RNA sequence: GGGAACGACUCGAGUAGAGUCGAAAAGAUAUGGAGUGGUAGAACGAUAAGCCAGUAUCGGAAACGAUACAUGGCUUUUGACGUUCGAACACUCCUAAGUCAAAAGCCGAUGGUUCGCCAUCGGCAACUUUAUAAUUUACUUCGGUAAAUUAUAAAGAAAAGAAACAACAACAACAAC
Reactivity to DMS in 0.01 (KOAc 150mM, MgCl2 10mM, bicine 150mM(pH8.5), 24C), signal-to-noise 4, nucleotides 027 to 126: g010a030u010a300u000g000g000a010g030u000g010g000u020a240g010a010a000c000g020a100u010a010a020g010c000c000a020g010u000a000u010c000g010g010a110a070a190c000g000a010u000a000c000a080u000g030g010c000u000u000u000u000g020a180c110g010u000u000c000g000a160a300c020a010c000u000c010c000u000a000a090g010u000c030a110a120a130a140g000c010c000g020a020u000g010g000u010u020c280g020c000c000a010u000c000g010g010c000a000a000
Reactivity to 2A3 in 0.01 (KOAc 150mM, MgCl2 10mM, bicine 150mM(pH8.5), 24C), signal-to-noise 1, nucleotides 027 to 126: g020a000u060a070u150g000g000a010g030u000g000g040u160a060g000a020a010c020g040a100u070a290a030g050c030c010a010g000u000a000u030c000g000g000a110a030a000c020g000a000u000a010c070a090u000g030g010c000u000u000u000u020g050a040c010g040u000u000c000g010a000a020c000a000c000u020c010c000u010a010a010g010u010c010a050a000a180a080g000c000c040g000a010u030g000g140u060u120c300g040c050c000a000u000c000g010g010c010a000a000